An RNA of 177 nucleotides, treated with DMS and read out base by base. For DMS, 745 sequencing reads were counted.
RNA sequence: GGGAACGACUCGAGUAGAGUCGAAAAGGGUCUGUUCUAUUCAGCGCUGGAUGCCGUUCUGACGGGCUGAGGUCACCCGCUCACGCUCACCCGGCGUCUCGCAGCAACGGCGGCGUCGCGGUUGGAGACAACUUCGUGCGUUCGCGCACGAAGUUGUAAAAGAAACAACAACAACAAC
Reactivity to DMS in 0.01 (KOAc 150mM, MgCl2 10mM, bicine 150mM(pH8.5), 24C), signal-to-noise 1, nucleotides 027 to 126: g020g010g020u000c050u010g030u000u000c060u020a140u010u000c060a050g050c070g020c020u000g020g020a070u010g000c000c040g000u020u000c070u000g010a130c090g040g000g020c040u000g010a050g040g000u000c120a300c030c020c010g000c100u010c090a030c160g000c020u040c060a090c010c030c020g010g000c020g010u010c030u000c070g020c030a130g050c210a030a070c200g000g010c020g060g020c020g030u000c000g010c060g020g010u010u000g010g000a200g010